This 177-nucleotide RNA was probed chemically with DMS. The DMS profile rests on 580 reads. Source: RMDB library RFMREP, as collected in RNAgym.
RNA sequence: GGGAACGACUCGAGUAGAGUCGAAAAUGGACCCGAAGCGGAGGUGACCUACCCUUGGCCAGGUUGAAGCAUGGGUAAAACCAUGUGGAGGACCGAACAGGUGAACGUUGAAAAGUUCUCUGAUGAGCGGAGUUUAUAGGUUCGCCUAUAAACUCCGAAAAGAAACAACAACAACAAC
Reactivity to DMS in 0.01 (KOAc 150mM, MgCl2 10mM, bicine 150mM(pH8.5), 24C), signal-to-noise 1, nucleotides 027 to 126: u000g020g010a100c030c000c000g000a170a090g030c070g030g020a070g000g000u010g000a040c070c030u000a080c040c000c000u010u040g090g020c020c040a100g000g030u030u000g000a300a220g000c000a000u000g000g010g020u000a130a040a060a100c020c000a010u010g000u010g020g010a230g000g000a030c000c000g000a120a090c030a020g000g030u000g000a050a040c080g000u010u000g000a100a060a110a210g010u000u000c000u040c000u000g000a170u000g030a130g000